[RMDB]
RNA sequence: GGGAACGACUCGAGUAGAGUCGAAAACUUCGCAACUUCGGUUGCGAAGAAUGGCAGCUCGUCCCGGCGCUGGGUACGCCGGGUUAUAAAACAUAACACAUCACUGGCUACCAUUCGUGGUAGCCAAUUAAUAUACUGGAUUCGUCCAGUAUAUUAAAAAAGAAACAACAACAACAAC
Reactivity to 2A3 in 0.01 (KOAc 150mM, MgCl2 10mM, bicine 150mM(pH8.5), 24C), signal-to-noise 2, nucleotides 027 to 126: c000u000u000c000g030c000a000a000c010u050u050c190g130g000u000u000g000c000g000a000a000g000a000a010u030g010g030c050a030g020c020u030c040g090u040c050c000c010g020g000c010g010c040u100g070g000g040u100a010c000g000c000c050g010g000g000u030u020a060u020a000a040a020a000c050a060u180a090a040c050a000c010a100u110c030a040c200u050g020g020c010u000a000c000c010a010u020u060c240g050u040g000g000u000a000g010c000c000a000a000
Reactivity to DMS in 0.01 (KOAc 150mM, MgCl2 10mM, bicine 150mM(pH8.5), 24C), signal-to-noise 6, nucleotides 027 to 126: c010u000u000c000g010c000a010a000c000u000u020c200g030g010u000u000g010c000g000a010a000g000a040a060u000g010g010c110a110g010c030u000c050g010u020c010c000c000g000g000c000g020c020u000g000g000g010u010a100c010g010c000c000g010g000g010u010u000a010u010a040a040a060a060c170a080u000a070a060c110a090c120a060u010c110a090c210u010g010g000c000u000a010c000c000a040u000u020c200g030u010g010g010u000a000g000c000c000a000a010